RNA sequence: GGGAACGACUCGAGUAGAGUCGAAAAGGACAAAAGUCCAGAGAUAGAAUGAGGAAUAGGAAUAGGCACGAUCGGAAAGAGACGAUUACGGUAGCCAGUUCGAUAGCCUUCGACUAUUCGACAUGUGGUAUGUACAUAGUUUCGACUAUGUACAUACAAAAGAAACAACAACAACAAC
Reactivity to DMS in 0.01 (KOAc 150mM, MgCl2 10mM, bicine 150mM(pH8.5), 24C), signal-to-noise 9, nucleotides 027 to 126: g000g000a020c020a080a080a110a110g000u000c000c010a100g000a160g010a080u010a040g010a000a120u010g010a070g000g000a030a060u000a130g000g000a100a060u010a060g010g020c010a080c090g010a030u000c010g000g000a060a100a110g010a170g020a090c030g000a110u030u030a110c110g000g020u020a060g010c020c030a140g010u010u000c000g000a070u000a080g010c000c010u010u010c160g010a280c010u000a010u000u000c010g000a100c070a060u020g010u020g000
Reactivity to 2A3 in 0.01 (KOAc 150mM, MgCl2 10mM, bicine 150mM(pH8.5), 24C), signal-to-noise 6, nucleotides 027 to 126: g000g000a000c030a040a300a030a010g000u000c000c000a000g010a000g000a030u090a010g050a010a080u120g010a020g040g020a010a030u010a020g020g020a010a040u030a040g000g000c010a000c050g000a020u020c020g010g050a040a070a020g080a030g020a020c000g000a030u030u150a050c040g040g000u000a000g000c000c000a000g010u000u000c000g010a030u030a040g000c000c000u010u030c010g030a020c010u020a020u010u030c010g040a010c040a070u100g060u030g060